[RMDB]
The record gives the reactivity of an RNA of 207 nucleotides to DMS and 2A3.
RNA sequence: GGGAACGACUCGAGUAGAGUCGAAAAGAAUACCUGAGUAUAGAACUAUCUUGAUCCCUGUUACUUCAAAACUAAAAUAAUGGUUUUAGGAAUUAAAAGGUGAGGCUAGUCACCUCCAAGGGAUGAACUGACUCAGGGAUUGAGGUAUAUAACAGUGCAUGUAUGCCCAGUUCGCUGGGCAUACAUGAAAAGAAACAACAACAACAAC
Reactivity to DMS in 0.01 (KOAc 150mM, MgCl2 10mM, bicine 150mM(pH8.5), 24C), signal-to-noise 1, nucleotides 027 to 156: g000a060a110u000a220c020c000u010g000a040g070u000a210u000a070g030a120a110c090u010a050u000c070u020u040g010a070u000c000c020c000u000g050u000u000a080c010u000u010c050a140a160a290a250c010u000a020a030a040a030u000a190a200u000g000g020u000u000u000u000a040g020g000a090a130u000u000a040a020a050a060g000g060u000g050a010g010g000c010u000a240g020u020c120a030c000c030u000c000c030a090a090g000g030g030a040u000g010a080a130c040u010g010a040c010u000c000a050g000g020g000a050u000u000g010a010g070g000u030a020u000a100u010a030a050c050a070g020u000g000
Reactivity to 2A3 in 0.01 (KOAc 150mM, MgCl2 10mM, bicine 150mM(pH8.5), 24C), signal-to-noise 2, nucleotides 027 to 156: g070a040a050u130a120c000c000u030g030a050g110u150a160u050a160g090a120a000c030u030a020u070c000u020u030g020a010u010c000c000c000u000g060u100u060a120c040u040u080c070a000a080a000a000c010u060a070a040a130a090u210a090a210u120g080g000u000u010u020u060a090g010g030a060a070u130u060a090a150a000a000g120g020u110g050a010g020g010c020u010a000g060u010c010a010c010c010u000c030c000a030a040g150g010g030a010u110g020a090a080c070u120g010a000c010u020c030a000g000g000g000a000u020u060g010a020g030g000u030a030u010a010u020a050a070c020a040g120u170g160